RNA sequence: GGGAACGACUCGAGUAGAGUCGAAAAACCGAGAUUUCGAUCUCGGUACAAGAUCCUAAGUCUGUAUGAGGGGGAGUGGCGGUCGGAAACGACCGGACCACGACGAUCCUCCCCACCAUACAGAUAUGGAAGAUUUUGGUUCUUUCGAGAACCAAAAAUCCUACAUCGGUUUCGACCGAUGUAGGAUAAAAGAAACAACAACAACAAC
Reactivity to DMS in 0.01 (KOAc 150mM, MgCl2 10mM, bicine 150mM(pH8.5), 24C), signal-to-noise 1, nucleotides 027 to 156: a020c000c000g000a010g060a060u010u000u000c200g030a020u000c010u000c000g020g000u000a000c070a040a170g000a160u000c010c010u000a120a300g020u000c000u000g020u010a010u000g010a120g000g000g000g020g010a070g060u010g030g000c000g000g050u010c000g030g010a100a100a210c010g000a030c000c020g040g000a030c010c020a040c100g020a130c190g000a070u000c090c010u000c020c000c010c010a040c020c010a010u010a010c000a000g030a020u000a070u000g000g020a050a130g000a280u000u000u000u000g010g010u000u000c000u010u000u000c230g020a100g000a010a020c010c020a000a020a000a120
Reactivity to 2A3 in 0.01 (KOAc 150mM, MgCl2 10mM, bicine 150mM(pH8.5), 24C), signal-to-noise 1, nucleotides 027 to 156: a010c020c020g000a010g000a030u160u150u240c190g070a010u000c000u000c000g000g030u000a010c000a000a100g030a140u030c010c000u090a190a030g000u000c000u000g000u000a020u010g030a150g000g000g000g000g000a080g020u030g010g000c020g010g000u000c000g000g080a040a080a060c000g010a000c000c050g030g010a010c000c000a000c020g040a040c020g010a040u050c000c000u000c000c000c020c020a080c000c000a000u000a000c000a000g000a000u020a000u010g040g030a060a060g020a200u060u110u030u040g000g000u000u000c010u010u070u150c230g150a010g000a010a000c010c000a000a000a000a000